RNA sequence: GGGAACGACUCGAGUAGAGUCGAAAAACAGCCGGAGGUUGUGGGCGGAAGUGCGCCCCUAUGUCGCAUCUGCAUCACCACCCACCAGCAGCAGAACAACACCACAACAGCAGCCACAGCCAACCUGAGUUAUGAUAGACUUCGGUCUAUCAUAACUAAAAGAAACAACAACAACAAC
Reactivity to DMS in 0.01 (KOAc 150mM, MgCl2 10mM, bicine 150mM(pH8.5), 24C), signal-to-noise 5, nucleotides 027 to 126: a120c090a110g030c030c030g010g010a180g030g010u000u000g020u010g020g000g000c040g010g000a090a070g020u000g030c040g010c030c040c060c080u000a060u000g000u010c040g010c040a060u000c050u000g000c050a070u000c040a070c030c030a060c030c000c020a080c070c060a080g010c040a080g000c040a040g000a070a070c090a050a080c060a050c040c040a040c070a040a070c040a070g010c040a050g000c030c050a030c050a060g000c010c030a040a070c070c040u000g020
Reactivity to 2A3 in 0.01 (KOAc 150mM, MgCl2 10mM, bicine 150mM(pH8.5), 24C), signal-to-noise 3, nucleotides 027 to 126: a010c020a000g050c010c030g070g000a050g030g000u050u050g020u090g030g020g010c050g040g050a090a040g160u080g050c010g010c010c020c000c020u120a100u210g090u090c020g000c030a030u020c010u060g000c010a080u060c010a000c040c000a010c010c000c010a110c000c010a020g020c020a000g000c000a010g020a070a020c020a020a010c010a010c030c010a050c010a100a010c020a030g000c000a010g000c010c020a040c010a020g000c010c010a010a040c020c020u050g040